Source: RMDB library OK1LIB, as collected in RNAgym. Structure probing data (DMS and 2A3) for a 177-nucleotide construct. High DMS reactivity at an A or C suggests that its Watson-Crick edge is free. For DMS the reverse transcriptase was MarathonRT.
RNA sequence: GGGAACGACUCGAGUAGAGUCGAAAAGAAGGACAUAACGCGAAGGAGCAGAGAGAAGACUGUAGUGACGCGAAUCACUAGACGUCAACGACGGCAAGAGAGAGCCGAAGGAGACGAUCCUUAGGAGAGUGCGGUAGGAUUUCGAUCCUACCGCACUAAAAGAAACAACAACAACAAC
Reactivity to DMS in 0.01 (KOAc 150mM, MgCl2 10mM, bicine 150mM(pH8.5), 24C), signal-to-noise 1, nucleotides 027 to 126: g000a240a010g000g000a010c070a040u040a110a020c060g000c100g000a060a170g000g000a070g100c000a000g000a050g000a100g000a130a040g000a110c040u020g020u000a060g000u000g000a000c080g000c260g050a170a300u000c030a060c030u100a040g010a080c010g000u000c010a010a270c000g000a130c000g010g000c010a030a040g040a140g070a230g090a020g020c000c040g000a000a280g000g000a130g000a090c050g000a220u000c000c000u000u070a130g000g000a180g080
Reactivity to 2A3 in 0.01 (KOAc 150mM, MgCl2 10mM, bicine 150mM(pH8.5), 24C), signal-to-noise 2, nucleotides 027 to 126: g100a040a000g170g010a010c010a080u180a230a020c260g000c000g030a080a000g010g000a000g040c000a000g050a000g000a010g040a140a010g000a090c000u110g030u070a020g060u040g030a020c090g040c140g220a130a030u030c000a000c100u000a090g050a230c000g030u000c000a030a000c000g000a000c010g060g020c000a050a010g070a010g020a050g000a000g300c010c000g020a000a020g050g000a000g000a000c020g020a100u000c000c010u040u140a000g000g120a140g000